This 177-nucleotide RNA was probed chemically with DMS and 2A3. It was measured as part of the RMDB library 15KREP. The reactions ran in a buffer of 150 mM KOAc, 10 mM MgCl2 and 150 mM bicine (pH 8.5), at 24 C.
RNA sequence: GGGAACGACUCGAGUAGAGUCGAAAAGUGUAGUUUUCCACUUUGCGCUAAUGGUCUUGUAUUCGGCUUAUACAAGAAUAUGUGCACAGGUAGUCCUUCUAUAGUUGAAUUUAAUAGGUUGGCUACCGAGCGAAUUAAUGUUCGCAUUAAUUCGCUCAAAAGAAACAACAACAACAAC
Reactivity to DMS in 0.01 (KOAc 150mM, MgCl2 10mM, bicine 150mM(pH8.5), 24C), signal-to-noise 2, nucleotides 027 to 126: g000u000g010u020a050g020u010u000u000u000c070c020a060c070u000u010u000g010c000g010c000u000a100a160u000g000g000u000c010u000u000g010u000a010u000u010c170g020g030c150u000u000a070u000a010c000a040a010g010a030a060u010a050u000g030u000g030c000a070c300a100g010g010u000a000g010u010c000c030u000u010c010u000a010u000a090g000u000u000g000a100a120u000u010u000a030a070u000a050g020g010u000u000g010g000c010u000a010c000c010
Reactivity to 2A3 in 0.01 (KOAc 150mM, MgCl2 10mM, bicine 150mM(pH8.5), 24C), signal-to-noise 2, nucleotides 027 to 126: g020u020g020u070a060g010u050u040u030u030c010c000a010c020u080u050u070g030c010g000c010u060a140a030u120g170g000u010c000u000u020g000u010a000u010u060c050g160g010c180u130u100a030u000a020c000a010a000g000a040a000u050a020u070g030u010g030c010a010c000a050g000g000u000a000g020u060c020c000u000u050c010u050a050u000a080g080u080u140g060a160a210u150u020u070a100a030u050a020g020g020u000u000g010g000c000u000a010c000c010